Structure probing data (2A3) for a 207-nucleotide construct. The reactions ran in a buffer of 150 mM KOAc, 10 mM MgCl2 and 150 mM bicine (pH 8.5), at 24 C. For 2A3, 708 sequencing reads were counted. 2A3 adducts were read by reverse transcription with SuperScript II with manganese.
[RMDB]
RNA sequence: GGGAACGACUCGAGUAGAGUCGAAAAGAUGUUCGCUGAUUCGUCAGCCGCAUGCCCAGGUGGCCGGGAUCUUCAAGGCUACGGCGCGGAUAGGUCCGCGCUGAUCGUUUUCCUCCAACGACGCUAUAAAAGGAACGAAGGUUCGCCUUCGUUCCAAUCAUUCAGCUAGCUUCGGCUAGCUGAAUGAAAAAGAAACAACAACAACAAC
Reactivity to 2A3 in 0.01 (KOAc 150mM, MgCl2 10mM, bicine 150mM(pH8.5), 24C), signal-to-noise 1, nucleotides 027 to 156: g040a020u020g050u090u120c100g000c010u030g000a040u010u130c150g040u000c120a020g000c030c000g000c000a010u130g040c000c000c000a020g000g030u010g020g050c010c030g150g160g000a020u000c010u050u030c060a030a000g010g010c000u020a030c030g000g020c000g000c000g020g020a070u140a240g300g130u080c000c000g000c020g000c000u010g000a000u000c010g000u060u060u190u110c020c070u010c030c050a090a060c060g100a060c070g000c120u130a140u130a220a160a040a070g010g000a010a000c000g000a000a000g050g010u060u130c240g040c000c000u000u000c000g000u000u000c010c000a010a000